[RMDB]
RNA sequence: GGGAACGACUCGAGUAGAGUCGAAAAGGGAGGAUGUCACGGACAAAUUCCGUGACCAUGUUAGGCCUCAUUGAAGAGCGUACCUAGCUGCGUUUCAACCUGCGUGGGUUGAGGCGACUUAGCAGAUUAGGCGUUGUUAUGCCUUAGUGGUCCUUACGAUGCUUCCUUUCUUCGGAAAGGAAGCAUCAAAAGAAACAACAACAACAAC
Reactivity to 2A3 in 0.01 (KOAc 150mM, MgCl2 10mM, bicine 150mM(pH8.5), 24C), signal-to-noise 1, nucleotides 027 to 156: g010g000g000a060g040g000a060u250g000u000c000a000c000g020g000a040c100a140a290a120u220u000c000c000g000u000g000a000c000c000a000u140g090u020u000a000g000g080c000c000u090c110a090u080u300g120a100a020g010a010g040c040g030u110a120c000c000u020a010g010c000u000g000c000g000u010u010u010c000a000a060c000c010u180g120c230g220u300g000g020g010u000u000g000a000g000g000c020g060a090c000u080u240a110g000c010a000g010a100u000u110a000g010g010c010g060u060u000g140u000u090a140u290g000c040c000u000u000a150g000u060g110g000u010c070c000u000u000a040c060